[RMDB]
RNA sequence: GGGAACGACUCGAGUAGAGUCGAAAACAUAGUGGUAGACAUGCAUGGAUGGAUCGUCUAACCAGCGCUGAUAGAUCCAGUCGAUAAAGGACUCGAAGGAUUCUUUUUCCAUCCUGGCAUCGUGUGCUGCUACUGUGGGGUUCGCCCCACAGUAGCAAAAAGAAACAACAACAACAAC
Reactivity to DMS in 0.01 (KOAc 150mM, MgCl2 10mM, bicine 150mM(pH8.5), 24C), signal-to-noise 2, nucleotides 027 to 126: c060a110u030a030g010u000g010g040u000a010g020a040c010a040u010g000c000a280u000g020g000a020u000g000g000a060u000c050g000u000c020u010a100a140c210c190a200g000c040g030c300u020g000a100u020a050g000a030u000c040c010a090g000u000c010g000a030u020a050a110a100g020g020a090c100u000c080g010a040a090g000g000a040u000u000c020u000u000u020u020u000c000c010a020u000c000c010u010g020g070c050a000u010c150g030u020g000u000g010c030
Reactivity to 2A3 in 0.01 (KOAc 150mM, MgCl2 10mM, bicine 150mM(pH8.5), 24C), signal-to-noise 2, nucleotides 027 to 126: c000a020u200a050g190u060g110g030u020a010g040a120c010a010u000g000c000a000u030g000g000a000u000g020g000a010u060c010g040u010c030u030a010a050c040c030a000g000c090g000c100u090g120a110u120a240g020a020u020c020c010a000g170u000c010g030a020u130a190a270a040g120g070a030c050u040c160g090a060a030g000g060a070u230u210c000u040u120u000u110u000c020c010a010u000c010c040u080g300g000c020a020u010c220g010u050g080u030g030c000
Conditions: 150 mM KOAc, 10 mM MgCl2 and 150 mM bicine (pH 8.5), 24 C.
Structure probing data (DMS and 2A3) for a 177-nucleotide construct.